[RMDB]
RNA sequence: GGGAACGACUCGAGUAGAGUCGAAAAAGUUUCUCGAUAAUUGAUCUGUAGAAUCUGUCAAGCAAAACCCCAAAACCUUACACUGAGAGCAUUUAGCCUUAUUACUCUUUAAAUCAAAUCAGGCAAUUCAAGGUCGCAGUCUUCGGACUGCGACCAAGUAUGGAUCAGUGUUCGCACUGAUCCAUACAAAAGAAACAACAACAACAAC
Reactivity to 2A3 in 0.01 (KOAc 150mM, MgCl2 10mM, bicine 150mM(pH8.5), 24C), signal-to-noise 2, nucleotides 027 to 156: a000g030u020u060u000c030u010c010g010a040u100a180a140u180u160g070a050u040c080u190g120u110a040g040a160a020u050c020u030g040u070c070a050a020g030c030a020a040a100a140c010c000c000c080a010a130a020a130c050c040u100u120a030c070a030c080u150g050a010g000a000g040c000a000u010u000u030a010g000c020c000u000u010a010u000u040a040c000u010c010u240u300u040a010a010a010u280c140a000a010a010u010c000a000g020g000c020a040a130u200u180c080a080a080g010g000u000c000g000c010a010g000u000c000u010u010c090g080g010a000c000u000g000c000g000a000c000c000a000a010
This 207-nucleotide RNA was probed chemically with 2A3. The 2A3 profile rests on 734 reads. 2A3 adducts were read by reverse transcription with SuperScript II with manganese. The RNA was probed in 150 mM KOAc, 10 mM MgCl2 and 150 mM bicine (pH 8.5) at 24 C. High 2A3 reactivity points to a flexible backbone, as in loops and unpaired stretches.